[RMDB]
RNA sequence: GGGAACGACUCGAGUAGAGUCGAAAACAACCGGUUGCAGUCCGGCCUCCUGUACCUGGCUGGCCCGGGCUGGGGCUGCAAGCUUUCCAGCCAAACUUAUGUGAAGCAAAGUAGUUGCAGUUUGACAAAAGGGACUUACUUUCGAGUAAGUCCCUUUAAAAGAAACAACAACAACAAC
Reactivity to DMS in 0.01 (KOAc 150mM, MgCl2 10mM, bicine 150mM(pH8.5), 24C), signal-to-noise 2, nucleotides 027 to 126: c070a160a090c200c010g020g020u060u000g010c060a080g000u000c020c000g000g030c000c010u050c070c000u000g020u020a130c110c070u000g010g000c070u010g000g020c110c000c000g030g000g000c000u010g000g000g000g020c000u000g000c060a060a180g000c020u000u010u000c120c030a020g060c000c030a000a220a050c050u030u020a090u030g080u020g010a130a040g040c050a100a040a180g000u010a070g000u000u010g000c060a170g000u020u020u000g000a210c290a030